[RMDB]
RNA sequence: GGGAACGACUCGAGUAGAGUCGAAAAGACAUCGAGCUGGAUGCGUCUUUUAUUGUGGAUCCAAGCACGAUCACGGAGGACGAGCCAACGAAGAACACACCAUCGACAAAGGGAACGGAGACAACAACCUUUUACCCCUAUUCGUAGGGGUAAAAGGAAAAGAAACAACAACAACAAC
Reactivity to DMS in 0.01 (KOAc 150mM, MgCl2 10mM, bicine 150mM(pH8.5), 24C), signal-to-noise 3, nucleotides 027 to 126: g020a140c130a080u000c030g010a080g030c060u000g030g000a060u010g000c030g040u000c050u000u010u010u000a090u000u010g040u010g000g000a040u000c020c030a060a170g010c100a080c100g010a030u000c050a080c070g010g000a050g010g010a060c050g010a070g010c010c030a040a090c110g000a060a050g000a090a080c130a030c060a060c050c000a040u000c050g000a090c080a060a070a100g000g000g010a070a050c090g010g000a070g020a050c040a040a030c130a070a140
Reactivity to 2A3 in 0.01 (KOAc 150mM, MgCl2 10mM, bicine 150mM(pH8.5), 24C), signal-to-noise 3, nucleotides 027 to 126: g050a030c040a050u020c040g000a020g040c010u040g110g010a060u080g070c040g020u110c070u060u140u040u060a280u110u200g070u070g090g090a030u000c000c030a110a000g080c060a050c030g010a010u050c030a000c060g090g020a020g030g000a020c030g000a000g040c020c000a020a030c060g080a080a030g040a080a010c100a010c000a020c070c010a030u070c030g060a060c050a050a100a050g080g000g000a020a030c040g090g020a030g020a030c000a030a010c010a030a030